[RMDB]
RNA sequence: GGGAACGACUCGAGUAGAGUCGAAAAGAAGACUAGUUCGCUAGUCUUCAAAAGAGCUAGCAAUGUUCAGCUAGCAAAGAUCGAAAGAUCAUAUGAACAAAAAAACCAUCGACUUCGGUCGAUGGAAGAUACUACUCCUGUUCGCAGGAGUAGUAUCAAAAGAAACAACAACAACAAC
Reactivity to DMS in 0.01 (KOAc 150mM, MgCl2 10mM, bicine 150mM(pH8.5), 24C), signal-to-noise 3, nucleotides 027 to 126: g000a000a000g000a010c000u010a000g010u010u010c200g030c000u000a020g010u010c000u000u000c010a060a050a090a120g000a140g010c010u010a000g010c010a120a060u010g020u000u010c030a050g020c010u000a020g000c010a040a020a070g000a000u000c000g000a200a110a100g000a000u000c010a090u000a080u010g010a020a020c030a000a010a100a050a100a080a180c010c000a010u000c000g000a010c000u010u000c230g030g020u000c010g010a010u000g010g000a010a030
Reactivity to 2A3 in 0.01 (KOAc 150mM, MgCl2 10mM, bicine 150mM(pH8.5), 24C), signal-to-noise 3, nucleotides 027 to 126: g010a010a000g010a000c010u000a000g010u030u060c080g020c090u000a000g000u020c000u000u010c000a010a000a000a010g050a010g010c000u000a000g000c010a060a210u070g040u070u050c020a020g000c000u000a000g000c010a010a060a020g000a000u000c010g030a070a030a030g000a010u010c010a010u040a040u100g030a010a020c030a050a100a010a010a010a000a070c000c000a010u000c000g000a010c000u020u040c250g070g000u000c000g000a010u000g000g000a000a000